[RMDB]
RNA sequence: GGGAACGACUCGAGUAGAGUCGAAAACUGGAAUAAGCCUGCCAGGUAUUAAAAGCUUUAAAAUUAAUCAUCUUGAACUUGAUACAAUAUAGUACAGCACUUUGAAAAUGAAUCAUCUGCUAGUUCAGUUAUAAGACGUGUUCGCACGUCUUAUAACAAAAGAAACAACAACAACAAC
Reactivity to 2A3 in 0.01 (KOAc 150mM, MgCl2 10mM, bicine 150mM(pH8.5), 24C), signal-to-noise 1, nucleotides 027 to 126: c020u030g020g050a060a070u100a140a040g030c000c000u000g040c000c010a030g060g000u040a040u010u160a060a120a010a000g010c030u020u110u250a040a130a120a110u130u080a040a110u100c010a020u010c010u000u050g010a020a000c000u040u080g010a030u070a060c080a130a020u140a020u040a240g040u020a040c020a000g020c030a030c040u000u040u080g040a020a020a070a130u060g040a060a050u000c020a010u010c010u030g000c010u000a000g050u020u040c000a020
Reactivity to DMS in 0.01 (KOAc 150mM, MgCl2 10mM, bicine 150mM(pH8.5), 24C), signal-to-noise 1, nucleotides 027 to 126: c040u000g000g010a180a060u000a130a140g010c000c020u000g020c020c040a010g000g010u000a050u020u000a030a080a140a080g000c060u000u000u000a020a060a070a040u010u000a080a100u000c110a110u000c000u000u000g030a030a030c020u000u000g010a110u000a020c090a030a090u000a100u000a090g020u000a060c070a030g000c000a030c030u000u040u010g020a000a150a100a130u010g000a100a010u000c020a020u000c040u010g050c020u000a080g020u010u000c030a070
The data come from the RNA Mapping Database (RMDB), library RFMREP.
Structure probing data (2A3 and DMS) for a 177-nucleotide construct.
For DMS the reverse transcriptase was MarathonRT.
2A3 adducts were read by reverse transcription with SuperScript II with manganese.